[RMDB]
RNA sequence: GGGAACGACUCGAGUAGAGUCGAAAAAACGCAUUCUACAAAAAAUAGACGCCAUGAACGGCUUUGAAUUUGAAGAAUAUUCCAAAAUCUUUUUCACUUCAAAGGGUUUUGAAGUCACAAUCACUCACAGGCUUAUACUAUUCGUAGUAUAAGCCUGAAAAGAAACAACAACAACAAC
Reactivity to DMS in 0.01 (KOAc 150mM, MgCl2 10mM, bicine 150mM(pH8.5), 24C), signal-to-noise 2, nucleotides 027 to 126: a040a150c190g010c130a100u000u000c060u000a090c030a030a070a150a080a080a230u010a130g020a050c060g010c180c060a050u010g000a050a090c090g010g020c000u000u010u020g010a040a070u000u010u000g000a010a000g010a000a000u000a070u000u000c060c190a050a070a110a020u010c050u000u010u000u020u000c060a010c300u000u000c010a020a020a020g010g040g010u000u000u000u000g020a110a080g010u020c070a060c180a030a030u000c110a040c110u030c150a160
The record gives the reactivity of an RNA of 177 nucleotides to DMS. The reactions ran in a buffer of 150 mM KOAc, 10 mM MgCl2 and 150 mM bicine (pH 8.5), at 24 C. It was measured as part of the RMDB library OK2TRN. For DMS the reverse transcriptase was MarathonRT.